[RMDB]
RNA sequence: GGGAACGACUCGAGUAGAGUCGAAAAGAUAUGGACAAUAGUAUACCAAGCGUUCGUGAACUACGCUCAAGGGUCGGAAACGACCCGUAGGCGCACGAGACGCUUGGUAUACUAUUGUCCUAAGUCACAACUUACAAUGCUUCGGCAUUGUAAGUUGAAAAGAAACAACAACAACAAC
Reactivity to DMS in 0.01 (KOAc 150mM, MgCl2 10mM, bicine 150mM(pH8.5), 24C), signal-to-noise 2, nucleotides 027 to 126: g020a040u010a300u000g000g000a040c010a030a030u000a000g020u000a010u000a010c000c010a000a010g020c000g070u010u000c020g020u000g000a080a100c190u040a300c010g040c030u000c040a300a300g000g010g010u000c010g030g000a050a170a300c050g000a000c000c010c000g020u000a100g000g030c040g030c000a000c030g000a030g000a040c000g000c000u010u000g020g010u000a010u000a000c000u000a010u000u020g000u000c000c010u020a000a040g020u000c020a230